[RMDB]
RNA sequence: GGGAACGACUCGAGUAGAGUCGAAAAUUCGUUCGAAAGAAGAGCGGCACAGCCAAGUAUCCGUCCGCGGGAAAUGGGAGUUUGUCCGGGCAGGAAGAACUAAGGGAUUCAAGGUUCUCCGGUAUCAAGCAGGGUUUCUCAUGAUCCAUAUGUGACAAUAUCUGUUCAGGUUCGCCUGAACAGAUAUAAAAGAAACAACAACAACAAC
Reactivity to DMS in 0.01 (KOAc 150mM, MgCl2 10mM, bicine 150mM(pH8.5), 24C), signal-to-noise 2, nucleotides 027 to 156: u000u000c050g050u000u010c010g010a110a160a130g000a140a120g000a110g010c000g010g010c080a120c080a090g020c000c080a020a130g020u000a080u010c010c040g010u010c030c010g050c100g010g020g020a050a100a060u000g000g020g000a130g020u000u000u000g050u000c050c040g120g010g060c020a080g040g010a080a080g020a010a060c030u000a060a230g010g010g000a110u000u010c040a010a300g030g010u000u000c020u000c020c050g030g020u000a010u000c040a070a150g030c030a080g000g020g000u000u000u010c010u000c020a120u010g030a080u000c040c010a130u000a050u000g020u010g010a130c020a140
Reactivity to 2A3 in 0.01 (KOAc 150mM, MgCl2 10mM, bicine 150mM(pH8.5), 24C), signal-to-noise 2, nucleotides 027 to 156: u060u020c030g020u000u050c040g050a080a060a110g080a120a020g010a010g020c010g030g000c030a020c040a050g040c000c000a070a040g050u040a100u070c030c030g090u040c040c050g030c110g060g010g010a020a160a030u080g010g010g010a060g010u050u070u100g070u060c030c020g060g030g000c020a040g000g060a060a070g010a030a020c040u080a060a090g080g010g070a050u200u170c050a030a040g000g040u070u000c060u020c020c000g040g000u070a100u110c050a040a040g020c020a060g020g060g000u010u060u000c000u000c010a030u110g000a110u060c000c030a050u070a060u250g120u070g020a010c030a020

Structure probing data (DMS and 2A3) for a 207-nucleotide construct. The reactions ran in a buffer of 150 mM KOAc, 10 mM MgCl2 and 150 mM bicine (pH 8.5), at 24 C. DMS adducts were read by reverse transcription with MarathonRT. Values cover nucleotides 27 to 156. The 2A3 profile rests on 1,245 reads.